[RMDB]
RNA sequence: GGGAACGACUCGAGUAGAGUCGAAAAAGUACUCAUGAGUACUGCGUACAUGAUCAUCUAGGUACAUGGAUCGUACGUACGAUCGAUCACGGAUCCCAUGAGUACCGAGACGCGAUCGACUGUCAUGGAAGAUCGAUAGCUUCGGCUAUCGAUCUUCAAAAGAAACAACAACAACAAC
Reactivity to 2A3 in 0.01 (KOAc 150mM, MgCl2 10mM, bicine 150mM(pH8.5), 24C), signal-to-noise 3, nucleotides 027 to 126: a020g000u010a000c020u020c040a040u060g030a010g080u050a080c060u040g040c030g010u000a030c030a090u100g010a030u020c020a020u000c110u110a120g090g060u090a090c040a020u090g150g030a120u120c030g000u020a020c090g080u030a030c040g030a060u050c040g030a040u060c050a020c110g080g000a020u050c050c010c000a020u030g010a000g020u000a030c000c020g030a060g010a050c050g080c030g130a080u060c010g080a080c050u140g040u190c040a060u120g090
Reactivity to DMS in 0.01 (KOAc 150mM, MgCl2 10mM, bicine 150mM(pH8.5), 24C), signal-to-noise 2, nucleotides 027 to 126: a040g000u000a020c000u000c060a040u000g030a090g000u000a020c060u000g020c100g000u000a160c110a050u010g000a030u000c020a070u020c030u010a110g000g000u000a040c030a090u010g000g000a080u010c070g000u000a000c120g010u000a060c070g010a070u020c090g010a100u000c040a090c080g000g010a170u000c020c080c000a080u010g010a060g020u000a020c000c050g000a130g020a050c080g020c090g030a040u000c000g000a090c150u010g030u010c080a070u010g000

Structure probing data (2A3 and DMS) for a 177-nucleotide construct. The 2A3 profile rests on 2,170 reads. For 2A3 the reverse transcriptase was SuperScript II with manganese. The RNA was probed in 150 mM KOAc, 10 mM MgCl2 and 150 mM bicine (pH 8.5) at 24 C.